[RMDB]
RNA sequence: GGGAACGACUCGAGUAGAGUCGAAAAGGGUAGGGUCGCGAGGCGCCCAGGCAGACUCGAGAGGGCCGAAGCGUACAUUAUAGAUGAUGGUGGCGAUGCGAGGCGCCUGCUACUCGCCUUGCAGGGCCAAAUCGGUCGGAUUCGUCCGACCGAUUUGAAAAGAAACAACAACAACAAC
Reactivity to 2A3 in 0.01 (KOAc 150mM, MgCl2 10mM, bicine 150mM(pH8.5), 24C), signal-to-noise 2, nucleotides 027 to 126: g080g030g100u170a100g060g030g020u070c080g000c040g040a020g050g010c000g020c040c000c010a000g000g000c020a010g030a180c000u020c050g030a070g000a050g060g060g010c010c020g020a050a010g030c020g040u070a060c030a030u110u230a140u170a240g170a140u200g010a030u040g010g070u010g020g000c010g030a050u030g040c020g020a030g010g000c020g020c020c000u000g010c000u030a060c000u020c060g010c000c000u010u030g030c010a020g080g010g000c020
Reactivity to DMS in 0.01 (KOAc 150mM, MgCl2 10mM, bicine 150mM(pH8.5), 24C), signal-to-noise 4, nucleotides 027 to 126: g010g010g000u000a090g010g000g010u010c100g010c040g020a060g000g010c050g020c110c070c040a100g010g010c040a120g010a080c030u010c040g010a130g000a190g020g010g010c020c020g000a080a140g010c040g010u000a090c050a040u000u000a140u010a130g000a110u000g000a080u000g010g010u010g000g010c020g000a160u020g010c000g010a040g000g010c020g020c080c020u000g010c090u000a060c110u000c010g010c000c010u000u000g010c020a070g000g000g010c140
Chemical mapping of a 177-nucleotide RNA with 2A3 and DMS. The reactions ran in a buffer of 150 mM KOAc, 10 mM MgCl2 and 150 mM bicine (pH 8.5), at 24 C.